An RNA of 207 nucleotides, treated with DMS and 2A3 and read out base by base. 2A3 adducts were read by reverse transcription with SuperScript II with manganese.

[RMDB]
RNA sequence: GGGAACGACUCGAGUAGAGUCGAAAAUGAUCAAAUUCAGAUACAUCAGGGUCAACAGGCACAUCGUCAUUUCGUCCACGUUCUUUCGAAGAGCUGAAUUUGUCGGUAUAUUGAUGAAAAGAAUAGUCGUCCUGGUAACCUCUAUGAGUCUCCGGACGUAUCUCCUCAUAUUCGUAUGAGGAGAUACAAAAGAAACAACAACAACAAC
Reactivity to DMS in 0.01 (KOAc 150mM, MgCl2 10mM, bicine 150mM(pH8.5), 24C), signal-to-noise 4, nucleotides 027 to 156: u010g010a060u000c020a070a070a110u010u000c030a060g010a150u010a070c150a150u000c030a090g020g020g010u010c040a060a080c020a070g020g000c050a150c060a100u010c080g000u000c050a110u000u000u040c020g010u010c030c060a110c070g020u000u000c030u000u010u010c070g010a100a110g000a150g010c030u000g010a030a110u000u000u010g030u000c020g020g010u000a090u010a120u000u000g010a100u010g000a070a040a080a100g000a080a050u000a080g000u000c030g010u000c000c000u000g020g000u000a060a050c020c010u000c040u000a080u000g000a210g020u000c020u000c010c000g020g010a300c120
Reactivity to 2A3 in 0.01 (KOAc 150mM, MgCl2 10mM, bicine 150mM(pH8.5), 24C), signal-to-noise 6, nucleotides 027 to 156: u120g020a050u080c070a040a040a020u140u060c050a030g020a040u080a110c040a060u050c050a040g020g000g040u020c030a060a020c020a070g050g010c030a030c020a100u050c030g050u020c030a040u040u090u040c030g030u000c050c010a040c070g020u040u020c000u040u140u150c130g100a090a040g010a020g020c030u030g040a070a060u100u080u090g030u040c020g000g050u060a070u030a050u130u130g050a060u040g040a040a050a040a110g090a060a060u080a080g050u050c050g010u050c000c000u000g000g010u020a020a040c000c010u020c020u030a060u110g010a030g030u000c020u000c040c040g050g010a020c060

The data come from the RNA Mapping Database (RMDB), library OK3TST. For DMS, 8,946 sequencing reads were counted. For 2A3, 6,180 sequencing reads were counted.